An RNA of 177 nucleotides, treated with DMS and 2A3 and read out base by base. For 2A3 the reverse transcriptase was SuperScript II with manganese. It was measured as part of the RMDB library OK2TRN.

RNA sequence: GGGAACGACUCGAGUAGAGUCGAAAAGCCUUCCACCGUUUUCCUCGUUUUUGUCUCCACGUUCUCGGCCACAAACACCAACUGGCAACUUUUUUUGUUUGUGCAAACCAAACUGCAUAAUGUAUCAUAUUCCUAAAUCAUUCGUGAUUUAGGAAUAAAAAGAAACAACAACAACAAC
Reactivity to DMS in 0.01 (KOAc 150mM, MgCl2 10mM, bicine 150mM(pH8.5), 24C), signal-to-noise 9, nucleotides 027 to 126: g010c030c030u000u000c020c020a120c050c040g000u000u000u010u000c020c020u000c060g010u000u000u010u000u000g010u010c030u000c010c030a140c060g010u000u000c020u000c040g010g000c050c020a040c060a040a050a060c060a050c070c060a040a060c080u000g010g010c140a070a100c040u000u000u000u000u010u010u000g010u000u000u000g020u000g000c070a050a080a090c090c090a040a060a080c100u000g000c040a050u000a060a060u000g010u000a070u010c100a150
Reactivity to 2A3 in 0.01 (KOAc 150mM, MgCl2 10mM, bicine 150mM(pH8.5), 24C), signal-to-noise 3, nucleotides 027 to 126: g020c010c000u030u030c040c020a070c050c030g030u010u020u080u070c010c010u010c070g040u030u020u020u100u150g080u010c020u000c010c010a040c050g030u080u010c030u010c000g000g000c010c010a050c010a010a130a000c020a010c010c020a020a060c040u030g040g000c020a040a090c070u030u060u030u050u000u130u160g060u050u060u020g010u030g000c020a040a030a060c030c040a070a060a020c050u050g000c020a050u070a180a080u240g070u090a100u110c040a030